[RMDB]
RNA sequence: GGGAACGACUCGAGUAGAGUCGAAAAAGCCGAGGACUACGGUCCUCGGCAACAACCGUCACAACGGCUUCCUGGCGUGACGGGGUUAACCCCAACGGAGCAAGUGCGAGCUUACGAGCUCGCACAAACAAUACCCGUAUUUCGAUACGGGUAUUGUAAAAGAAACAACAACAACAAC
Reactivity to 2A3 in 0.01 (KOAc 150mM, MgCl2 10mM, bicine 150mM(pH8.5), 24C), signal-to-noise 6, nucleotides 027 to 126: a000g000c000c000g000a010g000g000a000c040u050a040c300g080g000u000c000c000u000c000g010g100c000a000a000c000a000a000c000c000g000u000c000a000c000a040a030c030g070g000c010u230u120c020c010u040g050g000c020g000u000g000a000c000g000g010g000g000u100u250a110a100c020c000c010c000a020a100c100g030g000a010g010c040a180a030g010u000g000c000g010a010g000c000u060u050a080c190g050a020g000c000u000c010g000c020a000c000a000a000
Reactivity to DMS in 0.01 (KOAc 150mM, MgCl2 10mM, bicine 150mM(pH8.5), 24C), signal-to-noise 3, nucleotides 027 to 126: a140g010c000c010g040a020g010g020a020c000u000a050c210g020g010u010c000c000u010c000g000g010c000a000a000c070a080a170c010c000g020u000c000a010c030a090a300c060g010g000c110u000u060c040c000u010g030g020c300g000u000g000a000c010g000g000g000g020u000u010a060a070c110c020c000c160a130a090c200g000g000a050g010c030a160a090g010u000g000c000g000a040g010c000u000u010a060c140g020a010g030c000u000c000g030c000a000c010a000a100
Notes: The record gives the reactivity of an RNA of 177 nucleotides to 2A3 and DMS. The RNA was probed in 150 mM KOAc, 10 mM MgCl2 and 150 mM bicine (pH 8.5) at 24 C. The 2A3 profile rests on 7,880 reads. It was measured as part of the RMDB libraries RFM100 and RFMREP.